This 177-nucleotide RNA was probed chemically with DMS and 2A3.
The reactions ran in a buffer of 150 mM KOAc, 10 mM MgCl2 and 150 mM bicine (pH 8.5), at 24 C.
It was measured as part of the RMDB library OK2TRN.
For DMS, 3,119 sequencing reads were counted.
For 2A3 the reverse transcriptase was SuperScript II with manganese.
RNA sequence: GGGAACGACUCGAGUAGAGUCGAAAAUGGUCAAACAGCGUAAACGCCGACAUCACGGUAAUCAGCUACGGGAUCAAUGACGAAUCGGCGACGAGUGUCCCGGAGGGUAUUCGCGGCAACGUGGUCGACUCGUAUCCAAGUUCGCUUGGAUACGAGUAAAAGAAACAACAACAACAAC
Reactivity to DMS in 0.01 (KOAc 150mM, MgCl2 10mM, bicine 150mM(pH8.5), 24C), signal-to-noise 4, nucleotides 027 to 126: u010g000g010u000c030a060a110a130c100a060g010c020g040u000a060a070a120c150g010c010c020g010a100c130a070u020c160a120c040g000g010u000a070a050u000c150a130g000c060u000a050c150g000g000g000a030u010c050a070a080u000g000a050c100g000a100a070u000c020g010g000c050g000a060c010g000a100g030u000g000u000c020c030c030g010g010a020g010g010g010u000a070u000u000c040g010c270g010g020c020a020a040c050g020u010g010g020u010c030g010
Reactivity to 2A3 in 0.01 (KOAc 150mM, MgCl2 10mM, bicine 150mM(pH8.5), 24C), signal-to-noise 2, nucleotides 027 to 126: u050g000g000u070c010a030a100a120c030a130g010c000g080u120a030a060a100c100g000c010c020g060a050c060a130u120c040a030c060g000g000u060a060a070u090c080a020g010c020u060a040c070g040g010g010a010u000c000a010a090u140g070a000c030g050a040a050u020c010g010g020c010g080a010c020g040a150g100u040g040u060c030c110c060g000g010a030g050g080g100u180a150u030u040c030g010c010g040g000c040a030a030c030g030u030g020g050u010c020g000